[RMDB]
RNA sequence: GGGAACGACUCGAGUAGAGUCGAAAAUAUGCAUUCGUGCAUAAUAAAUCCUAAGUCCAACUAAGCGCUCGAGCGACUCAACAGCCAAUCGGAAACGAUUGGACAUGAGUCCCGAGCGGAAACGUUGGAUAUGGAGACCUAGCUGGUUCGCCAGCAACAUUGAGCAAUCCUUCGGGAUUGCUCAAUGAAAAGAAACAACAACAACAAC
Reactivity to 2A3 in 0.01 (KOAc 150mM, MgCl2 10mM, bicine 150mM(pH8.5), 24C), signal-to-noise 2, nucleotides 027 to 156: u100a000u000g000c000a010u050u090c280g120u070g010c000a000u010a040a000u080a020a140a010u030c020c000u010a150a000g050u000c000c000a000a000c010u040a120a070g130c010g000c000u000c000g200a200g110c120g010a000c000u000c000a060a140c010a110g050c000c000a000a000u030c000g030g070a080a030a070c010g000a000u000u000g000g040a020c010a050u050g000a000g010u000c000c000c000g020a020g000c000g000g000a000a040a000c060g000u000u000g000g010a040u020a000u030g010g000a010g010a020c000c020u030a060g000c010u020g030g000u050u040c250g070c130c000a000g010c000a000a000